Structure probing data (DMS and 2A3) for a 177-nucleotide construct. The reactions ran in a buffer of 150 mM KOAc, 10 mM MgCl2 and 150 mM bicine (pH 8.5), at 24 C. Values cover nucleotides 27 to 126. DMS (dimethyl sulfate) methylates the pairing face of unpaired adenines and cytosines. Source: RMDB libraries RFM100 and RFMREP, as collected in RNAgym. 2A3 is a SHAPE reagent: it acylates the 2'-hydroxyl of flexible nucleotides of all four kinds.

RNA sequence: GGGAACGACUCGAGUAGAGUCGAAAAUCAGGUGGCCGCAUAUAUUGCGAGCCAGAUAGGGCAGAACGCGCAGUCCGUGCAGACCACGGCAGAGUCGCAUUUGCGUUGCUCGAGGCGCAACCGAUACUCUCUUACACAACUUCGGUUGUGUAAGAGAAAAAGAAACAACAACAACAAC
Reactivity to DMS in 0.01 (KOAc 150mM, MgCl2 10mM, bicine 150mM(pH8.5), 24C), signal-to-noise 4, nucleotides 027 to 126: u000c030a100g010g030u010g010g010c020c010g000c010a010u020a150u050a090u060u000g000c000g000a120g010c000c000a020g000a040u010a050g010g010g000c050a090g010a020a080c150g020c020g010c030a140g010u060c010c020g000u000g000c130a160g000a150c240c020a020c010g000g020c050a180g020a040g020u020c010g020c010a170u000u000u010g000c020g030u020u020g020c000u000c010g010a020g000g000c000g030c040a000a210c020c010g010a120u080a070c140
Reactivity to 2A3 in 0.01 (KOAc 150mM, MgCl2 10mM, bicine 150mM(pH8.5), 24C), signal-to-noise 6, nucleotides 027 to 126: u060c000a010g130g080u030g020g020c020c010g010c030a010u150a010u020a090u190u140g000c010g020a020g000c020c000a000g000a020u070a020g060g020g000c010a000g030a140a070c060g020c000g000c030a020g070u050c010c010g000u010g000c040a060g040a180c060c000a010c010g020g000c050a030g030a030g160u200c010g000c040a040u050u050u110g010c030g040u050u050g000c000u010c010g000a010g010g000c010g000c000a030a010c000c000g020a030u150a130c010